[RMDB]
RNA sequence: GGGAACGACUCGAGUAGAGUCGAAAACAAGAACGUCGUUCGCGGCCUUGUGCCGUUUCGCGGCGAUGGUCUUGGCGAUGCUGUCGCCGACUUCCAGGGUUUCGGCCGUCCGGCGGUGGAUCAGAAGUCAAUACUCCGAGUUCGCUCGGAGUAUUGAAAAAGAAACAACAACAACAAC
Reactivity to DMS in 0.01 (KOAc 150mM, MgCl2 10mM, bicine 150mM(pH8.5), 24C), signal-to-noise 5, nucleotides 027 to 126: c020a040a020g010a020a030c020g010u000c010g010u000u010c120g030c010g010g010c010c030u010u020g030u020g030c020c040g010u000u000u010c190g010c060g000g020c010g000a020u000g000g000u000c020u000u000g000g000c120g000a050u010g010c060u000g010u000c000g030c000c000g000a050c110u000u010c050c060a170g020g000g010u000u000u010c150g010g020c050c050g010u010c120c040g030g020c020g010g030u000g010g010a070u010c030a150g000a120a100g000
Reactivity to 2A3 in 0.01 (KOAc 150mM, MgCl2 10mM, bicine 150mM(pH8.5), 24C), signal-to-noise 3, nucleotides 027 to 126: c010a010a000g020a050a000c010g010u000c000g000u180u200c030g030c030g020g010c000c040u200u300g160u300g040c000c040g020u100u100u110c060g000c040g000g000c000g010a000u010g000g050u010c010u030u060g040g080c060g070a040u170g190c060u070g020u050c010g000c000c030g010a060c040u080u050c050c020a080g080g010g000u060u130u200c120g120g000c020c000g040u060c030c000g020g010c000g010g020u030g030g000a040u040c030a030g100a220a010g080